[RMDB]
RNA sequence: GGGAACGACUCGAGUAGAGUCGAAAACGCCACAUUACCAGCGUCGCUAAGGACUGCUGCACCGUCAUAAACUGGGAACAACUACCGUCAUGGCUGUCUGCUAUAGGCGAAUGUGGCAUCGCCGUAGCGCCUGUGAACCAUUCGUGGUUCACAGGCGAAAAGAAACAACAACAACAAC
Reactivity to DMS in 0.01 (KOAc 150mM, MgCl2 10mM, bicine 150mM(pH8.5), 24C), signal-to-noise 1, nucleotides 027 to 126: c190g020c000c000a000c010a010u000u100a110c240c090a110g000c060g040u000c060g000c150u010a220a110g030g010a000c060u010g050c000u010g000c130a040c030c030g000u000c060a110u010a020a260a090c060u050g000g000g000a060a070c140a060a120c120u000a020c000c010g000u000c090a020u020g000g010c000u000g000u000c030u000g050c020u000a050u000a100g000g040c060g000a060a000u000g090u000g000g000c040a300u000c020g020c000c000g000u000a040g000
Reactivity to 2A3 in 0.01 (KOAc 150mM, MgCl2 10mM, bicine 150mM(pH8.5), 24C), signal-to-noise 4, nucleotides 027 to 126: c050g040c010c010a000c010a030u050u120a060c020c000a040g010c000g040u040c000g040c110u130a090a070g140g000a090c050u150g010c000u000g000c000a040c000c010g060u090c030a090u110a140a270a020c060u180g020g030g020a010a140c060a080a020c050u140a040c020c010g050u070c040a010u060g000g040c020u020g070u030c030u030g020c000u030a030u060a160g020g000c060g000a080a080u120g010u030g000g000c010a000u020c040g040c000c000g020u020a020g060